[RMDB]
RNA sequence: GGGAACGACUCGAGUAGAGUCGAAAAGAUAUGGAAGCAAGGGAGUGCAUACGCUAGGAACUACACUGUAAAUCGGAAACGAUUUGCAGUGCCUAGCGUAUGCACGAAGAACUUGCUUCCUAAGUCACCUUAUGCAGUAGUUCGCUACUGCAUAAGGAAAAGAAACAACAACAACAAC
Reactivity to DMS in 0.01 (KOAc 150mM, MgCl2 10mM, bicine 150mM(pH8.5), 24C), signal-to-noise 3, nucleotides 027 to 126: g000a040u000a300u010g010g000a030a010g010c000a010a010g000g000g000a100g010u000g000c000a020u000a000c000g020c010u010a000g000g020a100a020c120u020a300c020a010c000u000g020u000a000a000a000u000c010g000g000a120a110a180c000g010a000u000u000u000g010c010a000g010u000g000c000c000u000a010g000c000g010u000a000u000g000c010a010c010g010a030a150g000a130a150c000u000u000g000c000u000u000c000c000u000a000a070g010u000c020a200